RNA sequence: GGGAACGACUCGAGUAGAGUCGAAAAUCCAACAUAGAGCAGAUGUUUUACGAGAUUUGGAAGGAUCUGUCGCUGAACGACUCCCUGACCGCCGUGGAGCGCUCCAAGCUGGCUGUUUGGGAUUAUACUAGGAGUAUAAUUUCGAUUAUACUCCUAGAAAAGAAACAACAACAACAAC
Reactivity to DMS in 0.01 (KOAc 150mM, MgCl2 10mM, bicine 150mM(pH8.5), 24C), signal-to-noise 9, nucleotides 027 to 126: u010c010c010a120a140c160a090u010a080g010a240g010c030a070g010a070u000g000u000u000u000u010a090c080g010a130g000a100u010u010u000g010g010a140a060g000g000a030u000c020u000g010u000c040g020c060u000g010a060a120c110g010a090c140u000c010c010c010u000g000a040c030c080g000c030c030g010u000g010g000a070g010c180g010c160u000c040c050a040a110g010c080u010g020g010c030u000g010u000u000u010g010g000g000a050u010u010a060u010a160
Reactivity to 2A3 in 0.01 (KOAc 150mM, MgCl2 10mM, bicine 150mM(pH8.5), 24C), signal-to-noise 9, nucleotides 027 to 126: u010c000c010a020a020c030a080u220a030g050a020g040c030a000g020a070u050g240u190u060u040u140a130c060g050a100g030a300u160u160u220g070g020a040a020g040g020a010u010c010u030g070u080c090g000c110u070g040a080a030c050g070a070c070u010c000c000c000u010g010a010c010c010g020c010c020g030u050g040g060a070g060c140g060c100u020c040c000a060a050g060c060u100g030g010c010u010g010u020u020u020g010g000g010a020u090u080a060u040a070
The data come from the RNA Mapping Database (RMDB), library OK2TST. The record gives the reactivity of an RNA of 177 nucleotides to DMS and 2A3. The DMS profile rests on 24,099 reads. DMS adducts were read by reverse transcription with MarathonRT. Conditions: 150 mM KOAc, 10 mM MgCl2 and 150 mM bicine (pH 8.5), 24 C. High DMS reactivity at an A or C suggests that its Watson-Crick edge is free.